RNA sequence: GGGAACGACUCGAGUAGAGUCGAAAACUUGCCUGAGCUACACGUCUGUUACCUGCUCCCCUUUGCAGGGCUGUGGGAUGGUGCCUGGCAAGUGCCACUCACUGAGUGUGACUGAGAGGGGACAGCCCGUGCCUAAGAACUUCGGUUCUUAGGCACGAAAAGAAACAACAACAACAAC
Reactivity to DMS in 0.01 (KOAc 150mM, MgCl2 10mM, bicine 150mM(pH8.5), 24C), signal-to-noise 3, nucleotides 027 to 126: c060u000u000g010c020c010u010g000a150g010c040u000a050c080a100c070g010u010c060u000g010u000u000a120c070c010u000g000c070u000c110c020c000c030u000u000u020g000c060a030g000g010g000c070u000g000u000g000g010g030a090u010g020g020u000g010c010c010u010g000g000c060a070a160g000u000g000c020c010a030c000u010c020a120c050u010g010a090g010u000g000u010g010a220c090u000g010a050g010a060g000g000g000g000a160c080a050g010c060c030
Reactivity to 2A3 in 0.01 (KOAc 150mM, MgCl2 10mM, bicine 150mM(pH8.5), 24C), signal-to-noise 2, nucleotides 027 to 126: c010u060u050g010c000c010u070g020a020g030c030u120a020c100a040c110g070u040c050u070g200u130u130a130c010c010u040g010c030u020c010c040c010c000u010u060u170g030c020a000g050g030g000c010u040g010u070g030g000g020a020u020g040g000u010g000c020c000u000g000g000c020a010a020g000u000g050c010c000a000c000u000c000a120c090u150g070a030g130u190g030u110g070a050c010u040g030a010g030a010g070g020g000g010a010c000a020g040c000c040